RNA sequence: GGGAACGACUCGAGUAGAGUCGAAAAAUUGAGGACCCUCCACCCCCACCCCACCAGGCAAGGAAGGGCUCUACCCAGAGUCAGGAGCGUGGCCUCCAGGGCUGCGAGGGAAGACGCCCCGUCCAGCAUUAAGGAUCGUGUUCGCACGAUCCUUAAUAAAAGAAACAACAACAACAAC
Reactivity to DMS in 0.01 (KOAc 150mM, MgCl2 10mM, bicine 150mM(pH8.5), 24C), signal-to-noise 1, nucleotides 027 to 126: a180u020u000g000a220g040g040a230c040c020c000u020c030c030a300c020c020c010c000c020a210c050c010c000c020a100c050c160a120g010g000c020a130a020g020g000a300a050g010g020g020c020u000c000u000a110c040c020c030a170g020a020g020u010c020a080g030g030a040g000c050g020u020g000g010c150c020u000c010c050a080g000g000g030c020u030g010c090g010a170g000g020g000a130a020g020a080c150g000c030c010c020c040g000u010c000c020a160g010c070
Description
Chemical mapping of a 177-nucleotide RNA with DMS. Values cover nucleotides 27 to 126. The data come from the RNA Mapping Database (RMDB), library OK2TST. The DMS profile rests on 586 reads. For DMS the reverse transcriptase was MarathonRT.